An RNA of 177 nucleotides, treated with DMS and 2A3 and read out base by base.

RNA sequence: GGGAACGACUCGAGUAGAGUCGAAAAUCUUGGUAUUCUACUGGGUGGCAAGGGCUGACCGGCAAGGGAAGAAGUUUCCAGUCAUCUUGUGCCACUUCGGUGCGCAGAUGGGCGAGGUGUCCGGUCCGGCUUUACUAUGGUUCGCCAUAGUAAAGCCAAAAGAAACAACAACAACAAC
Reactivity to DMS in 0.01 (KOAc 150mM, MgCl2 10mM, bicine 150mM(pH8.5), 24C), signal-to-noise 3, nucleotides 027 to 126: u020c010u010u000g000g010u000a040u010u010c070u020a110c080u010g000g000g040u010g020g020c090a060a070g010g000g010c060u020g000a030c020c040g010g010c060a100a150g010g000g010a040a060g000a120a110g010u010u010u000c000c030a240g020u010c010a000u000c010u000u050g050u000g010c150c020a020c030u010u020c070g020g020u000g000c010g010c020a010g000a050u000g010g000g000c070g000a130g010g020u000g010u020c010c010g010g010u000c050c210
Reactivity to 2A3 in 0.01 (KOAc 150mM, MgCl2 10mM, bicine 150mM(pH8.5), 24C), signal-to-noise 4, nucleotides 027 to 126: u060c020u050u060g040g020u120a170u120u060c010u060a070c040u020g000g010g070u050g050g000c060a070a060g010g020g010c030u040g010a020c020c000g010g010c010a080a080g080g010g010a000a050g100a100a030g100u020u050u030c010c000a000g060u000c010a020u010c000u090u120g020u010g130c150c010a000c000u040u050c100g050g010u020g010c010g000c010a010g010a040u040g020g020g110c080g020a100g080g070u040g010u040c020c020g000g000u000c020c020

DMS adducts were read by reverse transcription with MarathonRT.